This 207-nucleotide RNA was probed chemically with 2A3 and DMS. The RNA was probed in 150 mM KOAc, 10 mM MgCl2 and 150 mM bicine (pH 8.5) at 24 C. For 2A3, 722 sequencing reads were counted.

RNA sequence: GGGAACGACUCGAGUAGAGUCGAAAAGGGCUAUUCGUAGCCCAGGAGACCUUUGUGCCACAGACCCACGCAAGGUCAAUCGAUCCCAUUGGGAUCGUAUUGACUGAUGACCGUGGGAGAACUGUGGCACUCUGGUAACAAGCAUCUUCGGAUGCAAAAAAGGCGGUUAAUUCGUUAACCGCCUUUUAAAAGAAACAACAACAACAAC
Reactivity to 2A3 in 0.01 (KOAc 150mM, MgCl2 10mM, bicine 150mM(pH8.5), 24C), signal-to-noise 1, nucleotides 027 to 156: g000g000g000c020u020a050u030u260c290g200u070a010g000c010c010c000a000g070g100a140g000a000c000c000u000u000u000g000u000g000c000c000a020c010a060g030a290c000c000c000a010c010g000c030a080a230g020g000u000c000a000a000u020c030g000a000u000c000c000c040a110u300u300g010g000g010a000u000c020g000u100a040u000u020g000a000c010u000g090a150u140g010a050c040c070g010u000g000g110g000a020g030a040a000c000u000g000u010g020g000c000a000c000u000c000u030g000g000u050a000a020c040a080a000g000c000a000u000c050u070u020c250g090g000a030u000g000c000a000a000
Reactivity to DMS in 0.01 (KOAc 150mM, MgCl2 10mM, bicine 150mM(pH8.5), 24C), signal-to-noise 2, nucleotides 027 to 156: g050g060g040c010u000a030u000u000c200g050u000a000g010c000c000c010a050g020g010a140g000a050c200c020u000u000u000g010u000g010c050c000a010c000a010g000a300c000c000c000a040c060g020c000a080a300g000g070u010c020a010a020u000c030g000a020u010c000c000c030a300u010u020g040g020g000a010u000c000g000u000a000u000u000g010a040c000u000g020a170u000g020a080c300c010g010u030g000g000g000a030g020a110a110c000u000g040u000g000g010c020a000c000u000c020u020g030g030u010a020a090c070a100a200g000c000a030u000c010u010u000c300g050g030a000u010g000c000a000a040